Source: RMDB library TTRDEL, as collected in RNAgym. Structure probing data (DMS and 2A3) for a 177-nucleotide construct. Values cover nucleotides 27 to 126.
[RMDB]
RNA sequence: GGGAACGACUCGAGUAGAGUCGAAAAGAUAUGGAUCUGAACUACACCGGCGUUACCGAAGAACUCGGAAACGAGGGAGGUAACCGAGGUGCAGAUCCUAAGUCAAACUCGUACUUCGGUACGAGAAUCAGUAGAUUCAGUUCGCUGAAUCUACUGAAAAAGAAACAACAACAACAAC
Reactivity to DMS in 0.01 (KOAc 150mM, MgCl2 10mM, bicine 150mM(pH8.5), 24C), signal-to-noise 4, nucleotides 027 to 126: g000a060u000a300u010g000g010a000u000c010u000g000a100a040c090u010a300c030a030c020c020g020g040c300g020u000u000a000c000c000g000a080a160g010a170a200c000u000c000g010g010a020a060a230c000g000a010g010g000g000a030g000g010u000a010a020c010c030g000a090g010g010u000g030c020a010g000a000u000c000c000u000a030a060g000u020c020a100a100a220c000u000c000g000u000a000c010u000u010c160g020g020u000a010c010g000a000g000a050a080
Reactivity to 2A3 in 0.01 (KOAc 150mM, MgCl2 10mM, bicine 150mM(pH8.5), 24C), signal-to-noise 4, nucleotides 027 to 126: g010a020u070a070u170g000g010a010u000c000u020g020a120a080c070u220a050c300a010c020c010g100g060c290g060u010u010a010c000c010g130a260a070g000a060a060c010u000c020g030g000a050a030a040c000g000a020g030g020g010a040g010g000u000a000a000c000c010g080a130g010g000u000g000c000a010g000a000u000c010c000u000a070a000g040u020c040a020a070a130c000u000c000g000u000a000c000u030u080c300g110g000u000a000c010g000a000g000a010a080